Structure probing data (2A3 and DMS) for a 207-nucleotide construct. The RNA was probed in 150 mM KOAc, 10 mM MgCl2 and 150 mM bicine (pH 8.5) at 24 C. For DMS the reverse transcriptase was MarathonRT.
[RMDB]
RNA sequence: GGGAACGACUCGAGUAGAGUCGAAAAACGGAUGUUACGCCAUCCGACCAUUGGGUAGAAGCGUUCAAUCAGCACCGUGACGGUGCAGAUGGGAAAUUGCCCAUGAUACGCACCAUACGUGGUGCGAAAAAGCCAUCGGUGUUCGCACCGAUGGCAAUCAUGGAUCUACGUUCGCGUAGAUCCAUGAAAAAGAAACAACAACAACAAC
Reactivity to 2A3 in 0.01 (KOAc 150mM, MgCl2 10mM, bicine 150mM(pH8.5), 24C), signal-to-noise 3, nucleotides 027 to 156: a000c010g000g000a000u000g000u120u100a020c040g020c040c000a000u000c000c000g030a010c010c000a080u040u090g000g000g030u060a090g050a170a010g040c010g010u050u090c040a090a110u000c010a030g020c000a000c000c010g140u210g280a180c250g000g020u000g000c000a020g000a000u020g020g040g070a000a070a130u050u050g020c000c000c000a000u040g060a000u040a030c010g000c000a010c000c000a010u040a090c250g150u050g020g000u000g000c000g010a000a000a010a010a000g010c000c000a010u000c000g000g000u030g030u110u090c210g050c050a000c000c000g000a000u000g000g000c000a000a010
Reactivity to DMS in 0.01 (KOAc 150mM, MgCl2 10mM, bicine 150mM(pH8.5), 24C), signal-to-noise 1, nucleotides 027 to 156: a160c040g030g000a050u000g010u000u000a110c130g070c300c020a010u000c000c000g010a110c090c010a150u010u000g000g000g040u000a130g000a110a090g010c110g020u000u160c050a110a030u010c010a100g030c040a020c000c030g020u000g030a240c170g050g050u000g000c010a010g010a010u010g000g000g010a020a140a130u000u000g000c020c010c000a030u040g030a130u010a060c030g000c000a010c000c000a110u000a060c240g060u000g050g040u030g000c000g000a000a060a110a110a070g010c010c000a060u000c000g040g050u000g000u010u000c250g050c030a010c050c010g070a000u010g000g030c000a000a010

Values cover nucleotides 27 to 156. For 2A3, 2,043 sequencing reads were counted. 2A3 adducts were read by reverse transcription with SuperScript II with manganese.